[RMDB]
An RNA of 207 nucleotides, treated with 2A3 and read out base by base. Reactivities are rounded to 0.1 and cut off at 0 and 3. Reactivities are given for positions 27 through 156. The RNA was probed in 150 mM KOAc, 10 mM MgCl2 and 150 mM bicine (pH 8.5) at 24 C. The 2A3 profile rests on 1,608 reads. Source: RMDB library M2RFPK, as collected in RNAgym.
RNA sequence: GGGAACGACUCGAGUAGAGUCGAAAAUGAGACAAACACGCUUCACAAUGUGCGGCAAAGAAACAUUGUUUAUGCAAAGGCACUUCGCAAUGUGUGCUCAAACAUUGCUUAUUCACACACGCUUCACAAAAGAAUCAGUGGUUCGCCACUGAUUCAACUGUAACGCAGGCUUCGGCCUGCGUUACAGAAAAGAAACAACAACAACAAC
Reactivity to 2A3 in 0.01 (KOAc 150mM, MgCl2 10mM, bicine 150mM(pH8.5), 24C), signal-to-noise 3, nucleotides 027 to 156: u210g010a040g030a020c080a030a160a010c050a020c070g000c000u000u000c030a030c010a000a000u000g000u000g020c000g010g050c120a170a050a070g080a010a040a000c010a000u000u010g130u060u070u090a180u230g040c050a050a120a070g110g000c010a000c000u030u000c020g000c010a000a010u000g000u000g040u020g020c120u150c220a030a050a000c000a000u000u010g000c000u070u110a190u180u150c130a040c010a000c010a020c140g040c060u100u150c090a050c040a150a050a020a060g010a000a000u000c000a000g000u000g040g010u020u020c120g060c020c010a010c010u000g000a000u000u010c000a000a000